RNA sequence: GGGAACGACUCGAGUAGAGUCGAAAAGAUAUGGACGAAUCUGGGUGGAGGUGGAUUAUCGGAAACGAUAAUACACCGAUGAAACCCAGAGUUCGUCCUAAGUCAAACAAUGCCUUCGGGCAUUGAACUGAUUACAACUGUUCGCAGUUGUAAUCAGAAAAGAAACAACAACAACAAC
Reactivity to DMS in 0.01 (KOAc 150mM, MgCl2 10mM, bicine 150mM(pH8.5), 24C), signal-to-noise 4, nucleotides 027 to 126: g000a040u000a300u000g000g010a010c000g010a050a060u000c000u010g000g010g010u000g010g000a020g020g030u000g000g000a010u000u000a000u000c000g010g000a180a120a180c000g010a010u000a000a010u000a030c000a020c010c000g000a050u000g000a180a200a030c000c000c000a000g000a010g010u010u000c000g020u000c000c000u000a010a080g000u000c040a130a140a300c010a010a010u000g010c000c000u000u020c300g030g000g010c000a000u000u000g010a080a270
Reactivity to 2A3 in 0.01 (KOAc 150mM, MgCl2 10mM, bicine 150mM(pH8.5), 24C), signal-to-noise 2, nucleotides 027 to 126: g040a030u090a030u210g000g000a010c000g000a020a020u010c010u010g010g040g010u020g030g030a020g000g020u020g010g020a010u010u000a010u020c000g000g000a080a070a030c000g010a000u000a010a000u020a000c010a010c000c000g010a040u010g000a010a010a000c000c010c000a000g000a000g000u010u010c010g000u000c000c000u000a000a000g000u030c010a040a050a110c000a010a000u020g010c010c020u060u080c300g120g020g000c010a000u010u000g000a070a060